[RMDB]
RNA sequence: GGGAACGACUCGAGUAGAGUCGAAAAAGGAGGAAUCCUCCUGAUAGGAACUGGAAUGUGCCUUGAAGGGGACACCAUGUGUAUAAGAACAUCAGCUGGUCGCCGGGGAUGGUGGCUUACGCCUGUAAGCCCCAGAGAUAUUCGUAUCUCUGGGGCUAAAAGAAACAACAACAACAAC
Reactivity to DMS in 0.01 (KOAc 150mM, MgCl2 10mM, bicine 150mM(pH8.5), 24C), signal-to-noise 8, nucleotides 027 to 126: a050g010g010a060g010g020a170a190u010c020c000u010c010c000u000g000a170u000a020g010g010a060a030c020u010g010g020a150a100u010g010u000g000c000c000u000u000g000a300a050g000g020g010g010a090c120a070c030c040a080u000g030u000g010u000a080u010a080a110g000a100a050c060a050u000c090a080g000c070u000g010g020u000c060g010c030c030g000g010g010g000a090u010g010g020u000g000g010c040u000u000a050c130g000c030c020u000g010u010a100
Reactivity to 2A3 in 0.01 (KOAc 150mM, MgCl2 10mM, bicine 150mM(pH8.5), 24C), signal-to-noise 5, nucleotides 027 to 126: a000g080g020a030g020g060a160a130u040c000c050u020c010c010u010g000a020u030a040g020g000a040a030c020u060g050g180a250a110u170g020u040g050c010c000u010u020g040a030a010g010g020g010g000a000c010a020c020c040a060u120g050u020g010u080a070u030a260a100g060a070a020c020a040u080c040a010g030c020u040g020g030u050c020g000c060c020g000g050g070g070a080u160g010g020u020g000g000c000u020u040a040c060g020c040c010u040g030u060a050